[RMDB]
RNA sequence: GGGAACGACUCGAGUAGAGUCGAAAAGCGUACUACUUAGCUUUUGACGGCUUCGUUUGUGGGAGUACGCUCCCAAAUAGGAGCGUACAUCGAUCACAGACAAGCCGAUAAGCUAAGUAUCGCAAAAGUAUGGUCAGCCUUCGGGCUGACCAUACAACAUACGUUCCUGGUUCGCCAGGAACGUAUGAAAAGAAACAACAACAACAAC
Reactivity to DMS in 0.01 (KOAc 150mM, MgCl2 10mM, bicine 150mM(pH8.5), 24C), signal-to-noise 2, nucleotides 027 to 156: g000c000g040u010a090c080u000a020c010u000u000a020g010c010u010u020u000u020g000a190c050g000g020c010u000u000c190g020u000u000u020g040u000g010g020g000a150g030u000a000c010g010c000u000c000c000c030a050a140a200u000a050g030g000a020g020c000g040u000a010c020a130u000c120g030a140u020c000a030c000a030g000a040c020a000a030g010c000c000g000a020u000a010a020g010c010u000a030a050g010u010a000u010c010g020c050a070a070a080a180g030u000a020u000g010g020u000c010a030g000c010c010u000u010c300g080g030g030c000u010g000a000c000c000a000u000a020c010a050a170
Reactivity to 2A3 in 0.01 (KOAc 150mM, MgCl2 10mM, bicine 150mM(pH8.5), 24C), signal-to-noise 4, nucleotides 027 to 156: g000c010g050u150a130c040u000a000c000u050u000a010g000c010u100u080u050u110g230a110c020g000g020c000u020u050c120g000u000u020u000g000u000g000g060g000a040g000u000a000c000g000c000u000c000c000c010a280a290a070u300a060g000g000a000g000c000g000u000a010c000a100u100c010g120a090u060c000a000c010a000g000a010c010a000a000g000c000c000g010a010u010a000a000g000c000u000a000a000g000u000a000u010c010g000c000a070a030a000a060g000u000a000u000g000g010u000c000a000g000c000c030u070u080c300g020g010g010c000u000g000a010c000c000a000u000a020c000a000a000

Background:
This 207-nucleotide RNA was probed chemically with DMS and 2A3. DMS adducts were read by reverse transcription with MarathonRT. The reactions ran in a buffer of 150 mM KOAc, 10 mM MgCl2 and 150 mM bicine (pH 8.5), at 24 C. 2A3 adducts were read by reverse transcription with SuperScript II with manganese.